[RMDB]
An RNA of 177 nucleotides, treated with 2A3 and DMS and read out base by base. It was measured as part of the RMDB library OK1LIB. The RNA was probed in 150 mM KOAc, 10 mM MgCl2 and 150 mM bicine (pH 8.5) at 24 C. Reactivities are rounded to 0.1 and cut off at 0 and 3.
RNA sequence: GGGAACGACUCGAGUAGAGUCGAAAAGGUCACGAGGGCACCGAUUCCAGCAGCCGUCGGUAGUCGUCCCAGGUGUCCACGUCAAGCGGCACGCAGCCGUCCACGGCGAGUUCGCGCACUGGGUGGCGCUGGUUUACGUGUUCGCACGUAAACCAGCAAAAGAAACAACAACAACAAC
Reactivity to 2A3 in 0.01 (KOAc 150mM, MgCl2 10mM, bicine 150mM(pH8.5), 24C), signal-to-noise 2, nucleotides 027 to 126: g020g020u050c040a020c110g040a050g000g000g020c020a020c050c000g050a020u120u020c020c010a040g020c030a010g010c060c010g150u050c030g010g030u040a040g060u010c020g040u040c010c000c010a000g030g090u050g030u040c020c020a030c050g100u070c040a080a030g010c010g010g000c040a020c050g100c040a010g010c020c000g010u040c030c010a100c080g000g000c020g010a040g050u110u230c070g000c000g000c080a070c050u060g030g000g060u030g010g000c050
Reactivity to DMS in 0.01 (KOAc 150mM, MgCl2 10mM, bicine 150mM(pH8.5), 24C), signal-to-noise 2, nucleotides 027 to 126: g060g000u010c040a050c030g000a020g000g000g000c000a020c000c000g000a220u000u040c090c070a030g000c100a160g070c060c010g000u010c010g010g000u000a020g000u010c020g020u000c010c000c010a050g020g040u000g020u010c000c020a040c010g010u000c130a080a120g020c020g020g000c020a070c030g060c090a100g000c010c000g000u010c010c080a000c300g000g040c060g000a150g050u050u010c100g020c020g020c000a160c100u020g000g020g020u000g000g000c040

2A3 adducts were read by reverse transcription with SuperScript II with manganese.